[RMDB]
Chemical mapping of a 207-nucleotide RNA with DMS and 2A3. DMS (dimethyl sulfate) methylates the pairing face of unpaired adenines and cytosines. For 2A3 the reverse transcriptase was SuperScript II with manganese. For 2A3, 3,310 sequencing reads were counted.
RNA sequence: GGGAACGACUCGAGUAGAGUCGAAAACGAGGUGCGGUGGGCCUCGUUAACAAACCGCAAAAAAAUAGUCGCAAACGACGAAAACUACGCACUCGCAGCUUAAUAACCUGCGCUGAGCCCUUCUCCCAAAACUGAGGUAGGUUCGCCUACCUCAGAACAAAAGCAAACAGUUCGCUGUUUGCUUUUGAAAAGAAACAACAACAACAAC
Reactivity to DMS in 0.01 (KOAc 150mM, MgCl2 10mM, bicine 150mM(pH8.5), 24C), signal-to-noise 1, nucleotides 027 to 156: c010g020a040g030g010u000g050c040g010g000u000g000g000g010c000c000u000c000g060u000u000a040a100c070a050a080a130c030c020g000c060a000a000a010a130a050a130a240u000a080g020u010c010g030c080a110a120a120c040g000a050c020g000a100a030a070a130c020u000a040c030g000c030a080c050u000c000g020c000a050g010c000u000u010a080a130u000a160a070c200c000u030g010c050g020c100u010g000a100g000c000c040c030u000u000c060u000c010c010c000a000a100a060a180c010u000g030a000g030g000u000a000g000g030u000u000c300g020c010c000u000a000c000c000u000c000a000g000a060a150
Reactivity to 2A3 in 0.01 (KOAc 150mM, MgCl2 10mM, bicine 150mM(pH8.5), 24C), signal-to-noise 3, nucleotides 027 to 156: c000g000a010g010g020u060g040c040g000g030u050g010g020g020c000c010u000c020g050u030u040a020a020c020a020a050a040c020c030g010c010a090a040a000a000a000a000a100u150a040g010u010c020g000c090a090a130a130c090g030a000c000g070a030a030a020a020c100u150a060c050g000c050a040c010u030c010g010c000a010g000c010u050u060a040a010u040a080a060c020c010u020g020c020g010c110u050g040a020g010c010c010c000u070u060c030u020c010c020c000a020a100a050a070c000u000g000a000g010g010u000a000g000g000u000u050c110g040c010c000u000a030c000c000u000c000a000g000a000a000